Background:
This 177-nucleotide RNA was probed chemically with 2A3 and DMS. For DMS the reverse transcriptase was MarathonRT. Source: RMDB library TTRINS, as collected in RNAgym. 2A3 adducts were read by reverse transcription with SuperScript II with manganese. Conditions: 150 mM KOAc, 10 mM MgCl2 and 150 mM bicine (pH 8.5), 24 C. The 2A3 profile rests on 3,338 reads.

RNA sequence: GGGAACGACUCGAGUAGAGUCGAAAAGAUAUGGAAUGUAGUGUUACAGCAUACAGAGAUCAAAUACGGUCGGAAACGACCGACUAUUUGAUCGACGAAGUAUGAAGGUGGCUACAUUCCUAAGUCACACGUAUGACAUGUUCGCAUGUCAUACGUGAAAAGAAACAACAACAACAAC
Reactivity to 2A3 in 0.01 (KOAc 150mM, MgCl2 10mM, bicine 150mM(pH8.5), 24C), signal-to-noise 1, nucleotides 027 to 126: g020a060u080a060u210g000g000a000a000u010g000u000a000g000u050g240u300u280a030c020a050g030c020a030u020a010c030a000g070a000g020a020u000c000a000a000a000u010a020c040g000g000u000c030g000g060a140a060a070c000g020a030c000c000g000a000c000u010a010u000u000u040g010a000u000c000g000a010c010g030a070a040g000u010a000u020g060a090a050g160g040u060g080g000c010u020a000c000a020u000u000c010c000u000a040a000g030u000c010a030
Reactivity to DMS in 0.01 (KOAc 150mM, MgCl2 10mM, bicine 150mM(pH8.5), 24C), signal-to-noise 2, nucleotides 027 to 126: g000a050u000a300u010g020g000a010a000u000g000u000a030g030u000g020u050u000a030c020a160g000c000a010u020a020c000a030g000a100g000a000u000c000a020a010a000u000a060c020g000g030u000c000g000g000a110a090a200c020g010a010c000c000g010a080c300u000a070u000u000u000g010a020u000c000g020a250c300g000a030a120g000u000a000u000g000a030a080g010g010u000g020g000c000u000a010c000a100u010u000c000c000u000a010a100g000u010c050a290